[RMDB]
RNA sequence: GGGAACGACUCGAGUAGAGUCGAAAAAGCUGACGUACGCGUCAGCAAUGGACCAAUGAUGAGACAGUGUUUAUGAACAAAAGAUCAUGAUUAAUCCAGUUCUGCACAAAACACUGAGGUCCAUUAAUGAGCAUAGUCGUUUCGACGACUAUGCUCAAAAAGAAACAACAACAACAAC
Reactivity to DMS in 0.01 (KOAc 150mM, MgCl2 10mM, bicine 150mM(pH8.5), 24C), signal-to-noise 2, nucleotides 027 to 126: a110g040c000u000g000a020c000g010u000a030c210g010c010g000u010c010a000g030c030a030a020u000g000g000a000c000c010a140a170u020g000a110u090g010a220g010a210c070a000g000u000g000u000u000u000a060u030g020a000a050c020a030a010a060a210g000a000u010c190a060u000g000a230u030u050a100a010u000c000c080a300g010u000u000c000u080g000c170a070c180a050a010a040a030c000a010c070u000g000a060g020g000u000c020c000a000u000u000a070a220
Reactivity to 2A3 in 0.01 (KOAc 150mM, MgCl2 10mM, bicine 150mM(pH8.5), 24C), signal-to-noise 3, nucleotides 027 to 126: a000g010c000u010g000a000c000g030u090a000c200g010c000g110u010c000a000g010c000a000a010u000g000g000a000c020c000a030a010u290g130a120u160g010a050g020a020c050a040g010u000g070u030u050u040a190u130g030a100a000c000a010a190a000a030g020a000u000c040a140u100g080a110u220u220a070a060u010c020c030a000g000u000u000c020u060g040c080a010c040a050a090a000a000c000a000c010u020g060a020g020g020u000c000c000a000u000u080a010a050
An RNA of 177 nucleotides, treated with DMS and 2A3 and read out base by base. In probing experiments dimethyl sulfate is read out at A N1 and C N3, which are open when not base-paired. The DMS profile rests on 1,692 reads. The RNA was probed in 150 mM KOAc, 10 mM MgCl2 and 150 mM bicine (pH 8.5) at 24 C.